The record gives the reactivity of an RNA of 177 nucleotides to DMS and 2A3.
RNA sequence: GGGAACGACUCGAGUAGAGUCGAAAAACGGCGGUCAGCUCGUCUACGGUGACACAGACUCCAACUAUGUGACGUUCGCAGAUGCAAAAACUCCCGCAGAGCUGUGGGACAAGGCGGUGGCCGUGGCGAUUGGACCACACUUCGGUGUGGUCCAAUCAAAAGAAACAACAACAACAAC
Reactivity to DMS in 0.01 (KOAc 150mM, MgCl2 10mM, bicine 150mM(pH8.5), 24C), signal-to-noise 1, nucleotides 027 to 126: a150c020g020g000c000g010g010u000c010a130g030c030u010c010g020u000c050u000a050c190g000g000u000g050a130c000a000c050a020g000a200c140u000c040c060a020a170c090u010a120u000g010u000g000a130c080g000u010u000c040g030c010a070g000a050u000g010c090a030a150a040a070a090c300u000c010c000c030g030c090a060g000a110g010c070u000g060u000g000g000g000a020c060a040a060g010g000c010g010g020u000g040g010c000c000g000u000g010g030c050
Reactivity to 2A3 in 0.01 (KOAc 150mM, MgCl2 10mM, bicine 150mM(pH8.5), 24C), signal-to-noise 1, nucleotides 027 to 126: a000c010g020g010c050g040g040u020c010a080g080c140u120c120g000u000c010u040a040c110g080g040u010g070a020c010a000c000a020g080a170c020u060c010c010a030a040c050u100a030u160g050u020g030a050c020g040u070u030c050g160c020a020g020a180u120g040c000a000a090a000a080a080c030u020c060c040c020g000c040a040g000a070g160c120u040g010u000g010g030g020a040c050a060a000g040g050c040g000g140u100g000g010c010c000g010u000g030g000c000

For DMS the reverse transcriptase was MarathonRT.
Values cover nucleotides 27 to 126.
2A3 adducts were read by reverse transcription with SuperScript II with manganese.